[RMDB]
RNA sequence: GGGAACGACUCGAGUAGAGUCGAAAAUUGGAAAGGAUUUUGCUAUAAGAUGGGUGGCAAGUGGUCAAAAAGUAGUGUGAUUGGAUGGCCUACUGUAAGGGAAAGAAUGAGACGAGCUGAGCCAGCAGCAGAUAGGGUGGGAGCAGCAUCUCGAGACCACAGUGUCAAUCUUCGGAUUGACACUGUGAAAAGAAACAACAACAACAAC
Reactivity to 2A3 in 0.01 (KOAc 150mM, MgCl2 10mM, bicine 150mM(pH8.5), 24C), signal-to-noise 2, nucleotides 027 to 156: u130u070g070g000a080a020a040g010g010a030u040u120u080u080g050c020u110a040u020a220a040g030a060u050g000g080g040u100g000g010c030a040a040g020u000g030g010u060c070a000a060a000a050a000g070u090a000g020u050g020u000g080a150u080u080g030g090a040u020g000g020c030c000u030a060c000u010g010u080a080a080g030g000g000a030a060a070g030a020a120u140g000a030g020a030c110g010a040g070c000u020g000a000g040c020c020a030g020c000a000g060c020a030g030a120u120a040g030g030g000u090g010g010g000a030g030c020a010g000c000a030u030c010u020c090g070a040g010a030c010
Conditions: 150 mM KOAc, 10 mM MgCl2 and 150 mM bicine (pH 8.5), 24 C. Structure probing data (2A3) for a 207-nucleotide construct. For 2A3 the reverse transcriptase was SuperScript II with manganese. Values cover nucleotides 27 to 156. For 2A3, 872 sequencing reads were counted.